[RMDB]
RNA sequence: GGGAACGACUCGAGUAGAGUCGAAAACGUCGUGAACUAGCGACAAUGCCGUAGAUCUAUCGUUAUCUAACCGAAACAUCGUGACUAGUCGUAGAAUAGAACCAGGAGUGGGCGCUGGCAAACAAAGACGGUGUCUCAGAUUCGUCUGAGGCACCGUAAAAGAAACAACAACAACAAC
Reactivity to DMS in 0.01 (KOAc 150mM, MgCl2 10mM, bicine 150mM(pH8.5), 24C), signal-to-noise 3, nucleotides 027 to 126: c120g030u000c040g000u000g000a130a090c170u030a070g000c000g000a050c080a090a080u020g010c040c020g000u000a060g000a070u000c070u020a090u000c030g000u020u040a080u000c030u040a050a140c050c020g000a050a060a120c180a040u000c040g000u000g010a070c030u000a060g000u000c010g000u000a060g010a060a070u000a060g000a050a080c060c040a060g000g010a040g000u000g020g010g000c040g010c040u010g000g010c030a010a070a080c120a050a050a040g000
Reactivity to 2A3 in 0.01 (KOAc 150mM, MgCl2 10mM, bicine 150mM(pH8.5), 24C), signal-to-noise 3, nucleotides 027 to 126: c080g010u000c000g010u010g050a120a080c060u030a040g020c000g040a000c030a010a050u070g020c020c000g030u030a010g000a090u000c010u010a070u080c040g050u060u030a010u010c020u000a050a040c000c000g040a030a050a140c040a060u040c010g030u070g060a100c050u030a010g010u010c030g070u060a010g010a090a040u070a050g040a020a010c020c000a010g000g030a040g040u020g020g020g000c020g000c000u020g000g010c000a040a030a030c030a040a080a000g070